[RMDB]
RNA sequence: GGGAACGACUCGAGUAGAGUCGAAAAUUCAAAGGAAACCGCCCCUCUCCUAGGUUAGCUGUUCAAAGAUGGUGUUCAUGCAUAUCGAGUCAGCAAUGAGAUUUUAAAGCUGGUGUCCCUAACUUGGGCCAGUGUUGGGGUCCUACGAGCAAUGGAACUCAUUACUCGAUUUCGAUCGAGUAAUGAGAAAAGAAACAACAACAACAAC
Reactivity to DMS in 0.01 (KOAc 150mM, MgCl2 10mM, bicine 150mM(pH8.5), 24C), signal-to-noise 1, nucleotides 027 to 156: u010u000c050a010a120a060g010g000a030a100a100c030c030g020c010c000c040c060u000c040u000c000c050u000a050g050g000u000u000a050g060c030u000g010u000u010c040a160a100a080g000a060u000g030g030u000g030u020u000c080a080u000g010c070a080u000a050u000c040g030a280g040u000c010a130g050c040a080a110u010g030a110g010a130u000u000u000u020a030a100a170g010c000u000g000g020u000g020u010c030c030c030u000a050a090c050u000u000g040g000g020c010c030a080g010u040g000u010u000g020g030g040g000u010c010c010u000a050c080g000a130g000c030a090a060u030g020g000a060a190
Reactivity to 2A3 in 0.01 (KOAc 150mM, MgCl2 10mM, bicine 150mM(pH8.5), 24C), signal-to-noise 1, nucleotides 027 to 156: u060u030c000a010a040a060g020g000a080a050a250c010c010g060c060c010c000c020u000c010u010c060c040u010a000g000g120u070u060a030g000c040u020g040u230u060c010a110a170a100g020a000u020g000g030u010g020u010u140c110a120u070g040c010a000u010a030u050c000g000a030g060u040c000a000g000c010a000a050u150g000a050g000a000u000u060u280u300a060a030a010g000c010u010g000g080u040g080u120c000c010c080u050a080a080c000u090u070g010g010g000c010c000a050g000u000g010u170u070g000g000g000g030u000c000c000u060a080c090g070a010g090c000a160a040u080g000g010a030a090
The record gives the reactivity of an RNA of 207 nucleotides to DMS and 2A3. For 2A3 the reverse transcriptase was SuperScript II with manganese. Values cover nucleotides 27 to 156. 2A3 is a SHAPE reagent: it acylates the 2'-hydroxyl of flexible nucleotides of all four kinds. The data come from the RNA Mapping Database (RMDB), library OK3TST. The 2A3 profile rests on 527 reads.